[RMDB]
RNA sequence: GGGAACGACUCGAGUAGAGUCGAAAAUUACAUAAGUCUAACACCUUGUUUCGGACUAACAAGGACGUAUGGAGGAUGGCCGGUCCUCCAUAGUUAGACGUCCGAGAACCAGCCGAAAUGAAAAAGAAGGAGUAUUACUCUUCGGAGUAAUACUCCUAAAAGAAACAACAACAACAAC
Reactivity to 2A3 in 0.01 (KOAc 150mM, MgCl2 10mM, bicine 150mM(pH8.5), 24C), signal-to-noise 3, nucleotides 027 to 126: u180u100a070c060a070u220a190a040g000u030c020u040a100a020c040a080c060c040u040u080g020u000u010u050c080g140g040a200c070u000a040a050c010a020a030g010g010a030c050g030u020a010u010g000g020a010g010g000a000u050g140g070c040c020g030g000u000c000c000u000c000c000a000u010a000g000u020u010a090g000a020c000g000u000c010c000g040a060g010a050a050c030c030a020g030c020c010g030a020a020a040u040g010a050a110a030a020a000g210a040
Reactivity to DMS in 0.01 (KOAc 150mM, MgCl2 10mM, bicine 150mM(pH8.5), 24C), signal-to-noise 2, nucleotides 027 to 126: u010u050a040c140a140u010a100a080g000u030c020u000a030a110c060a200c030c030u000u010g020u000u000u000c020g000g010a030c100u020a080a080c000a020a110g020g000a020c050g070u030a010u020g000g010a020g000g000a010u030g000g010c040c120g000g010u000c000c000u010c000c000a000u000a000g010u010u040a080g020a190c020g000u000c030c030g000a160g010a070a100c190c160a090g000c020c020g010a030a070a020u010g000a100a120a030a140a100g010a120